RNA sequence: GGGAACGACUCGAGUAGAGUCGAAAAAUUAUGACUCCAGCAACACCCAUGAUUGUUGGAAUAACUUGAUAUGGAUUUUACACUUAAGGAGCAUGGGGACAUUCUAGGCCAUAAUUACCUCCCCCAGGUAGGCUAUGAUGUUCGCAUCAUAGCCUACAAAAGAAACAACAACAACAAC
Reactivity to 2A3 in 0.01 (KOAc 150mM, MgCl2 10mM, bicine 150mM(pH8.5), 24C), signal-to-noise 1, nucleotides 027 to 126: a000u140u100a040u020g030a060c080u040c040c020a000g080c000a000a020c020a060c030c010c010a000u040g060a130u040u080g050u030u080g010g000a020a040u100a080a000c080u040u040g080a000u120a050u290g190g000a180u060u120u140u200a080c110a020c030u060u100a090a220g050g010a100g150c000a020u060g010g000g000g000a020c020a080u030u000c060u020a090g000g000c000c010a050u070a060a000u090u090a190c000c000u030c000c000c000c000c000a000g040
Reactivity to DMS in 0.01 (KOAc 150mM, MgCl2 10mM, bicine 150mM(pH8.5), 24C), signal-to-noise 1, nucleotides 027 to 126: a070u010u000a030u000g010a100c080u000c000c020a030g000c060a030a160c150a140c050c010c030a060u000g000a210u010u000g000u010u010g000g000a100a120u020a070a080c200u000u000g010a090u030a190u040g000g000a040u020u000u040u000a040c090a070c010u010u000a040a080g000g010a060g020c070a070u000g040g000g010g000a170c190a150u000u000c010u000a090g000g050c030c020a030u030a050a030u000u000a110c000c000u000c020c000c020c000c030a030g030